[RMDB]
RNA sequence: GGGAACGACUCGAGUAGAGUCGAAAAUCGCAAAGUGUCGAAGGCGUCGCCUCGCAAGCUGCUGGUUCGCGCAAUGAAACGAAUCGCGAAGGAGCGCGGUUACACUAACGCAUACAUUCGCAAGUUCGGAACGUUCGCGGGCGUUGGGGAUUGGGCGAGUGAUUCGUACAUUCGUGUACGAAUCACUAAAAGAAACAACAACAACAAC
Reactivity to 2A3 in 0.01 (KOAc 150mM, MgCl2 10mM, bicine 150mM(pH8.5), 24C), signal-to-noise 2, nucleotides 027 to 156: u110c040g000c060a110a040a070g050u070g040u120c040g080a100a000g050g000c040g100u120c060g030c010c010u010c010g040c000a010a100g040c050u130g000c040u080g100g030u070u050c040g000c000g040c090a020a090u120g070a180a100a000c000g030a020a010u070c040g020c000g040a020a030g010g000a110g040c020g000c000g000g020u100u160a050c150a010c090u110a110a000c010g000c010a010u100a300c030a110u060u110c010g020c060a120a020g030u040u030c010g020g030a110a060c070g000u070u030c080g000c000g030g010g000c040g070u050u060g020g000g010g010a030u010u140g030g000g000c000g010
Source: RMDB library OK3TST, as collected in RNAgym. An RNA of 207 nucleotides, treated with 2A3 and read out base by base. The 2A3 profile rests on 1,126 reads. 2A3 adducts were read by reverse transcription with SuperScript II with manganese. The reactions ran in a buffer of 150 mM KOAc, 10 mM MgCl2 and 150 mM bicine (pH 8.5), at 24 C.